[RMDB]
RNA sequence: GGGAACGACUCGAGUAGAGUCGAAAAACGCCAUGGAUACGUCCAUGGCGAAGCGGGCAACGGAAUCCCAAAAGCAGCUGUUGUCUCCAGAGCAUUCCAGCUGCAAUUGGAUUUCGUUCCCUGCUAACAAGGGGAACAAAUUCGUUUGUUCCCCUUGAAAAGAAACAACAACAACAAC
Reactivity to DMS in 0.01 (KOAc 150mM, MgCl2 10mM, bicine 150mM(pH8.5), 24C), signal-to-noise 8, nucleotides 027 to 126: a170c010g010c000c000a000u000g000g000a020u010a060c190g010u010c000c000a010u000g000g010c000g000a010a000g000c000g010g000g020c200a020a010c000g000g000a010a010u000c080c020c080a010a010a070a300g010c010a010g010c000u000g000u030u010g000u010c030u010c170c190a120g010a090g010c050a030u010u020c200c020a010g010c000u000g000c000a010a140u000u000g000g000a030u000u000u000c010g010u000u000c290c000c000u010g010c010u000a110a180
Reactivity to 2A3 in 0.01 (KOAc 150mM, MgCl2 10mM, bicine 150mM(pH8.5), 24C), signal-to-noise 9, nucleotides 027 to 126: a010c000g000c000c000a000u000g000g000a020u030a080c250g090u020c000c000a000u000g000g000c000g000a000a000g000c000g000g010g000c020a000a000c000g000g030a000a000u060c060c050c000a010a020a010a000g000c010a000g000c000u010g010u130u070g040u070c030u050c070c090a100g030a030g160c040a030u150u050c060c010a010g000c000u000g000c000a010a040u010u010g000g000a000u000u000u000c000g000u000u000c000c000c000u000g000c000u020a050a040
An RNA of 177 nucleotides, treated with DMS and 2A3 and read out base by base.
It was measured as part of the RMDB libraries RFM100 and RFMREP.
The reactions ran in a buffer of 150 mM KOAc, 10 mM MgCl2 and 150 mM bicine (pH 8.5), at 24 C.
DMS adducts were read by reverse transcription with MarathonRT.
Values cover nucleotides 27 to 126.